[RMDB]
RNA sequence: GGGAACGACUCGAGUAGAGUCGAAAAUUCUUCGAUGUCGGCUCUUCCUAUCAUCGCGAAGCAGAGAUUGCGAAGUGUUGGAUUGUUCACCCACCAACAGGGAACGUGAGCUGGGUUUAGACCGUCGUGAGACAGGUUAGUUUUACCCUACUGUGUGACCAUGAAGGAAGUUCGCUUCCUUCAUGGUAAAAGAAACAACAACAACAAC
Reactivity to DMS in 0.01 (KOAc 150mM, MgCl2 10mM, bicine 150mM(pH8.5), 24C), signal-to-noise 2, nucleotides 027 to 156: u000u000c010u000u010c020g010a070u010g020u000c020g020g010c000u010c020u010u000c020c050u010a120u010c130a160u000c080g000c060g010a090a080g010c030a050g000a120g010a090u000u010g000c010g020a040a120g020u000g010u000u000g000g000a200u010u000g010u000u000c060a170c060c040c010a090c060c030a050a080c070a100g010g020g010a050a060c050g010u000g010a050g010c020u000g020g000g010u000u000u000a100g020a020c000c010g000u000c010g000u000g000a300g010a010c020a060g030g010u000u000a080g000u000u000u010u000a090c030c000c000u010a080c030u000g020u000g000u000g000
Reactivity to 2A3 in 0.01 (KOAc 150mM, MgCl2 10mM, bicine 150mM(pH8.5), 24C), signal-to-noise 3, nucleotides 027 to 156: u040u000c020u030u040c030g060a050u110g060u070c020g040g020c030u000c000u050u040c010c000u090a120u150c050a090u070c020g000c090g070a050a010g050c120a040g040a040g040a150u090u120g000c010g020a050a010g060u000g020u120u030g010g020a070u090u050g010u110u080c050a080c020c000c020a020c020c020a020a060c010a070g030g020g020a060a010c020g080u090g040a030g020c030u050g010g000g000u040u050u070a040g010a010c000c010g030u020c010g030u050g070a050g000a020c100a110g010g020u010u060a020g050u030u060u030u100a080c000c000c030u020a050c080u050g040u020g010u050g110

This 207-nucleotide RNA was probed chemically with DMS and 2A3.
For DMS the reverse transcriptase was MarathonRT.
It was measured as part of the RMDB library PDB130.
2A3 adducts were read by reverse transcription with SuperScript II with manganese.